The record gives the reactivity of an RNA of 177 nucleotides to DMS and 2A3. The reactions ran in a buffer of 150 mM KOAc, 10 mM MgCl2 and 150 mM bicine (pH 8.5), at 24 C.
RNA sequence: GGGAACGACUCGAGUAGAGUCGAAAACGAGGCCAUAGCCGACGGGAACGCCGAGGCCGCCAGGCGCGUAGAGGAGAGGAUGGUUGAGUACGUGGCGUCCGUCGUGGAGUCGCCGGACCCCCUGGCCAGUCAGGAUCAAGUUCGCUUGAUCCUGACUAAAAGAAACAACAACAACAAC
Reactivity to DMS in 0.01 (KOAc 150mM, MgCl2 10mM, bicine 150mM(pH8.5), 24C), signal-to-noise 2, nucleotides 027 to 126: c110g010a150g010g010c050c020a050u000a100g010c070c020g010a020c040g000g020g020a120a050c040g040c000c000g000a130g000g050c020c030g000c040c070a050g010g010c040g020c060g000u010a090g000a110g020g000a100g000a090g000g000a120u000g000g030u010u000g020a100g030u010a080c090g020u010g000g020c060g000u020c030c010g000u000c010g040u010g000g000a140g000u010c020g000c040c060g020g010a150c010c010c000c030c110u020g000g020c040c080
Reactivity to 2A3 in 0.01 (KOAc 150mM, MgCl2 10mM, bicine 150mM(pH8.5), 24C), signal-to-noise 1, nucleotides 027 to 126: c030g030a040g000g050c020c000a070u160a010g090c040c010g030a040c010g050g000g040a110a050c020g000c000c020g010a090g070g000c010c010g070c010c030a030g060g010c040g020c070g040u080a040g010a070g110g030a040g030a030g110g010a070u070g140g020u200u190g040a090g070u050a080c070g030u090g010g030c020g020u030c000c010g020u010c000g020u070g000g000a110g000u060c020g000c050c000g050g060a060c000c000c000c000c000u000g030g000c020c050